[RMDB]
RNA sequence: GGGAACGACUCGAGUAGAGUCGAAAAGGCCGGCUACUCUUCUUUCCCUUCUCUCGUCUUCCUCGGUCAACCUUCGAAGUUCCUCUUCUUCCUCCCUGCUGAGGUUCUUCCCUCCCGAGGAGAGCUGUAACGGGUCACUUCGGUGACCCGAAAAGAAACAACAACAACAAC
Reactivity to DMS in 0.01 (KOAc 150mM, MgCl2 10mM, bicine 150mM(pH8.5), 24C), signal-to-noise 2, nucleotides 027 to 129: g000g000c070c040g060g020c090u070a050c070u020c050u010u020c020u000u010u050c020c010c100u020u010c040u020c060u020c090g040u030c000u010u010c020c040u020c080g060g000u070c180a050a160c100c080u030u060c160g000a110a060g040u030u000c040c000u000c090u030u000c020u020u020c110c000u000c020c020c030u030g060c110u020g020a060g010g010u000u000c040u060u000c000c000c000u010c040c010c000g040a110g000g000a100g000a040g050c090u010g020u050a110a090
Reactivity to 2A3 in 0.01 (KOAc 150mM, MgCl2 10mM, bicine 150mM(pH8.5), 24C), signal-to-noise 3, nucleotides 027 to 129: g000g020c040c010g020g000c040u090a060c040u020c040u060u000c000u030u020u000c000c020c030u070u000c050u010c010u000c000g050u000c060u150u040c040c020u000c000g010g010u090c040a070a080c000c000u180u180c130g030a030a000g010u010u000c000c030u000c020u070u000c010u120u040c030c010u000c010c000c000u010g000c010u010g030a040g000g000u030u000c000u000u000c000c000c000u030c060c000c000g010a000g000g020a010g000a020g000c030u100g020u150a090a020